[RMDB]
RNA sequence: GGGAACGACUCGAGUAGAGUCGAAAAUGUGGCUCAGCAGAGUGCAGCCAGUUGUGGGUUUUUCUUGGGGCCGAGAUAGACGUGAGCAGAGAUGGAGGCCCCUCUCUCUCAGUCCCCACCACACACAUUCACACAUUAACUUCGGUUAAUGUGUGAAAAAAGAAACAACAACAACAAC
Reactivity to DMS in 0.01 (KOAc 150mM, MgCl2 10mM, bicine 150mM(pH8.5), 24C), signal-to-noise 4, nucleotides 027 to 126: u030g020u010g000g000c020u010c060a130g030c060a130g010a100g020u020g010c180a080g000c020c010a080g000u010u020g020u010g000g000g030u000u010u010u010u000c030u000u020g000g010g010g000c010c010g000a140g010a030u030a040g010a060c120g020u020g000a050g000c070a040g000a110g000a080u020g000g010a240g000g010c080c010c030c020u000c010u000c020u000c000u000c010a070g000u020c000c000c000c050a080c110c090a030c100a060c160a070c170a160
Reactivity to 2A3 in 0.01 (KOAc 150mM, MgCl2 10mM, bicine 150mM(pH8.5), 24C), signal-to-noise 5, nucleotides 027 to 126: u180g030u060g050g000c010u040c090a020g010c070a030g090a060g140u140g050c040a010g020c030c010a020g010u080u070g010u010g010g020g040u050u040u050u080u040c050u030u090g020g010g020g010c030c060g010a010g010a040u100a030g060a020c170g070u090g030a040g000c070a010g040a010g010a070u190g060g030a090g030g060c000c000c000c000u000c000u000c000u000c000u000c000a020g000u040c000c010c000c000a030c000c010a020c010a000c000a000c000a070